[RMDB]
RNA sequence: GGGAACGACUCGAGUAGAGUCGAAAAAGUUAAACCAUCAGUGGGCCAACAGGGUCAAAGUUAGUGGCUUGGUGGUUGAAAGCUCGGAGUCCGAACUCUCUGAAGACAUUUUUCCCGCCUUGCCACUUUCUAGUUGGUGACCUUGGCAAGCAAGGUAUCAGUAAUAAUGGUUCGCCAUUAUUACUGAAAAAGAAACAACAACAACAAC
Reactivity to 2A3 in 0.01 (KOAc 150mM, MgCl2 10mM, bicine 150mM(pH8.5), 24C), signal-to-noise 3, nucleotides 027 to 156: a000g090u090u040a080a070a030c040c030a060u130c030a040g100u110g050g050g020c020c000a050a050c050a180g120g020g080u080c060a140a050a000g000u010u010a000g000u000g000g000c000u010u020g010g000u010g000g010u060u090g000a010a000a010g010c010u010c010g010g000a020g030u070c180c140g090a110a090c050u010c000u010c030u090g030a080a010g030a110c090a140u140u090u000u020u010c010c000c000g020c000c000u000u000g000c000c000a000c000u000u000u010c000u030a020g000u020u060g050g040u020g010a000c000c000u010u010g020g030c070a050a010g070c010a020a050g050g020u110a050
Reactivity to DMS in 0.01 (KOAc 150mM, MgCl2 10mM, bicine 150mM(pH8.5), 24C), signal-to-noise 2, nucleotides 027 to 156: a160g000u000u010a070a090a100c030c000a040u000c020a160g050u020g010g000g010c020c020a060a070c060a140g020g010g000u000c040a080a080a120g000u000u000a010g070u000g010g000c010u000u000g020g040u000g010g020u000u000g020a030a060a100g000c070u000c010g060g010a030g000u010c010c000g020a180a070c030u000c010u010c010u000g000a070a070g010a130c070a170u000u000u000u000u000c070c020c000g010c020c000u000u000g010c000c020a030c000u000u000u000c010u000a150g030u000u000g020g020u000g010a040c000c000u000u000g020g000c100a090a160g000c020a040a050g010g020u000a280
Record summary: Chemical mapping of a 207-nucleotide RNA with 2A3 and DMS. Conditions: 150 mM KOAc, 10 mM MgCl2 and 150 mM bicine (pH 8.5), 24 C.